[RMDB]
RNA sequence: GGGAACGACUCGAGUAGAGUCGAAAAUUCGGUUGGUGCGUCUGUCCGGGUCGGGGCGCGUAAGCCGCCCAACCUCAUCCCGUUCCCUCGCGGAACAGGGAGUGUUAGCGCACGGCUGAGGGAACUACUAAAGUCCCAUGUUCGCAUGGGACUUUAGAAAAGAAACAACAACAACAAC
Reactivity to DMS in 0.01 (KOAc 150mM, MgCl2 10mM, bicine 150mM(pH8.5), 24C), signal-to-noise 1, nucleotides 027 to 126: u020u000c030g030g010u000u000g000g070u000g020c000g000u000c020u000g020u000c120c190g010g000g020u000c030g060g010g000g000c010g030c030g000u010a060a140g010c280c050g020c010c000c000a150a010c000c010u000c170a140u010c000c000c000g010u000u010c000c000c030u010c300g010c140g040g040a010a020c020a100g050g020g000a040g020u000g020u000u000a040g010c010g000c020a000c000g000g000c000u000g000a030g000g000g020a060a170c070u000a130
This 177-nucleotide RNA was probed chemically with DMS.
Source: RMDB library RFMREP, as collected in RNAgym.
The RNA was probed in 150 mM KOAc, 10 mM MgCl2 and 150 mM bicine (pH 8.5) at 24 C.
For DMS, 1,088 sequencing reads were counted.